[RMDB]
RNA sequence: GGGAACGACUCGAGUAGAGUCGAAAAGAAUGGUCAUCUCCGCCCCGUACACCAUCACGGCUGCCGCGGCCGAUGCGGCCACCUCCACCCUUAACGUCCUCGGCGGCGCUGGCGGCACGUUCAGGGCAUAGAGGUUAAUGUUCGCAUUAACCUCUAUAAAAGAAACAACAACAACAAC
Reactivity to DMS in 0.01 (KOAc 150mM, MgCl2 10mM, bicine 150mM(pH8.5), 24C), signal-to-noise 8, nucleotides 027 to 126: g010a110a060u010g010g010u010c050a070u010c030u000c020c040g010c030c010c010c040g000u010a060c110a090c070c020a060u010c090a120c090g010g000c040u020g010c020c020g000c050g010g010c020c030g000a060u020g000c070g020g000c020c040a070c030c020u000c020c030a130c030c010c030u010u020a070a090c080g010u000c010c010u000c050g000g000c020g010g010c060g000c050u010g000g010c060g000g010c060a040c050g010u000u000c070a050g000g000g010c150
Reactivity to 2A3 in 0.01 (KOAc 150mM, MgCl2 10mM, bicine 150mM(pH8.5), 24C), signal-to-noise 7, nucleotides 027 to 126: g070a030a080u130g020g030u060c030a070u030c050u020c040c020g030c020c010c000c010g040u060a030c030a030c030c020a040u100c040a020c050g040g000c030u040g010c020c010g030c010g020g010c020c020g020a020u100g040c040g010g010c000c000a020c000c010u040c010c010a050c020c000c010u020u050a060a030c010g020u020c000c010u030c020g040g000c020g070g070c080g020c030u030g030g010c030g020g000c050a010c040g010u030u040c030a020g030g000g000c010